[RMDB]
RNA sequence: GGGAACGACUCGAGUAGAGUCGAAAAUAGAGAAUCGAGAGAAAACUGGCUCUCCCUUAGCCAUCCGAGUGGACGUUCGUCCUCCUUCGGAUGCCCAGGUCGGACCGCGAGGAGGUGGAGAUGCCAUAUAUCCCGCCGUUCGCGGCGGGAAAAAGAAACAACAACAACAAC
Reactivity to DMS in 0.01 (KOAc 150mM, MgCl2 10mM, bicine 150mM(pH8.5), 24C), signal-to-noise 3, nucleotides 027 to 129: u060a110g050a070g020a060a050u030c090g020a040g020a070g040a070a110a100a130c140u030g030g010c020u020c030u000c000c020c060u030u000a140g030c230c000a000u010c020c020g010a010g030u000g030g000a050c050g000u050u030c180g030u030c010c000u000c070c140u080u000c020g060g000a000u000g000c100c000c030a000g000g000u020c070g020g020a240c000c000g000c050g000a130g000g000a060g000g080u020g010g030a100g000a040u020g000c050c030a020u140a060u020a090
Reactivity to 2A3 in 0.01 (KOAc 150mM, MgCl2 10mM, bicine 150mM(pH8.5), 24C), signal-to-noise 2, nucleotides 027 to 129: u180a000g070a000g040a060a080u150c060g000a000g000a000g020a090a020a040a100c030u030g080g000c010u000c010u020c030c000c000u060u060a020g080c030c000a020u000c040c000g000a000g040u010g030g000a020c080g120u190u070c090g020u110c000c030u020c060c000u080u070c010g000g000a010u010g000c020c000c030a020g070g010u090c010g010g030a040c010c030g010c020g000a040g040g030a020g010g080u090g000g010a100g000a030u110g050c000c050a000u000a000u000a030

Structure probing data (DMS and 2A3) for a 170-nucleotide construct. Values are in units of 0.01, from 0 to 300, in steps of 10. 2A3 adducts were read by reverse transcription with SuperScript II with manganese. Values cover nucleotides 27 to 129. In probing experiments dimethyl sulfate is read out at A N1 and C N3, which are open when not base-paired. The 2A3 profile rests on 3,186 reads. DMS adducts were read by reverse transcription with MarathonRT.